[RMDB]
RNA sequence: GGGAACGACUCGAGUAGAGUCGAAAAAUCAAAGGAAAGAUAAUAACGUUUACUCAAUCUGAUAAGCAGUCCUUGAUCAAGAGUGGGUACAAUGAUGUGAAUACUGUGCAUGAAAUUCAGGGAGAAACUCUUACGGACAUUUCGAUGUCCGUAAGAGAAAAGAAACAACAACAACAAC
Reactivity to 2A3 in 0.01 (KOAc 150mM, MgCl2 10mM, bicine 150mM(pH8.5), 24C), signal-to-noise 4, nucleotides 027 to 126: a000u120c070a070a020a030g040g030a110a080a010g060a080u120a090a090u100a180a120c090g030u030u050u070a030c020u010c030a040a090u030c000u000g000a020u050a080a000g040c030a020g090u110c030c000u040u080g070a030u020c070a180a090g010a020g030u090g010g010g000u030a080c090a020a050u150g040a090u130g050u050g100a030a030u050a140c060u040g060u090g060c050a050u070g110a080a100a010u110u030c030a040g020g030g000a050g040a010a010a010
Reactivity to DMS in 0.01 (KOAc 150mM, MgCl2 10mM, bicine 150mM(pH8.5), 24C), signal-to-noise 3, nucleotides 027 to 126: a120u030c020a040a030a090g020g010a050a080a090g000a050u020a060a070u020a050a050c030g090u010u030u000a060c030u000c020a030a040u000c010u000g000a010u010a080a040g010c110a080g010u020c100c000u010u010g010a020u000c040a020a040g000a000g030u010g000g010g060u020a030c250a010a080u000g000a020u010g000u050g000a120a070u000a090c060u050g020u000g000c120a030u000g000a020a060a040u020u000c050a020g010g000g000a120g000a090a070a110
About this RNA
The record gives the reactivity of an RNA of 177 nucleotides to 2A3 and DMS. 2A3 adducts were read by reverse transcription with SuperScript II with manganese. The RNA was probed in 150 mM KOAc, 10 mM MgCl2 and 150 mM bicine (pH 8.5) at 24 C. DMS adducts were read by reverse transcription with MarathonRT.